[RMDB]
RNA sequence: GGGAACGACUCGAGUAGAGUCGAAAAUACGUGACCUUCGGGUCACGUAACCGGCGUUCCCAAGUCAAAAAGAGAGACGCAAUCUCGACAGCGGCCUUUUCCUAUGAGUUGCUUUCGAGCAACUCAAUUAUUUUCCUUUAUUCGUAAAGGAAAAUAAAAAAGAAACAACAACAACAAC
Reactivity to 2A3 in 0.01 (KOAc 150mM, MgCl2 10mM, bicine 150mM(pH8.5), 24C), signal-to-noise 3, nucleotides 027 to 126: u040a000c000g000u010g000a000c010c000u020u040c300g060g000g010u000c010a010c000g000u000a000a000c010c010g080g000c020g020u010u020c000c000c000a000a020g120u080c040a030a030a080a100a060g080a000g010a000g010a040c030g000c090a050a120u020c020u010c040g040a060c030a010g040c030g000g000c000c020u050u070u090u080c010c000u150a160u140g010a000g010u000u000g000c000u070u050u170c230g030a010g030c000a000a000c000u000c000a000a000
Reactivity to DMS in 0.01 (KOAc 150mM, MgCl2 10mM, bicine 150mM(pH8.5), 24C), signal-to-noise 5, nucleotides 027 to 126: u000a010c000g020u000g000a010c000c000u000u020c230g030g010g020u000c000a000c010g010u000a000a070c070c050g000g010c040g000u000u000c000c000c000a150a120g000u010c100a040a070a070a100a080g000a090g000a040g010a060c070g020c110a100a150u000c030u000c030g000a060c130a060g020c040g010g000c050c030u000u000u010u000c020c020u010a070u000g010a010g000u000u000g010c000u000u000u010c140g020a030g000c000a000a000c000u000c000a010a020
The data come from the RNA Mapping Database (RMDB), library M2PK50. Structure probing data (2A3 and DMS) for a 177-nucleotide construct. For 2A3 the reverse transcriptase was SuperScript II with manganese. Conditions: 150 mM KOAc, 10 mM MgCl2 and 150 mM bicine (pH 8.5), 24 C.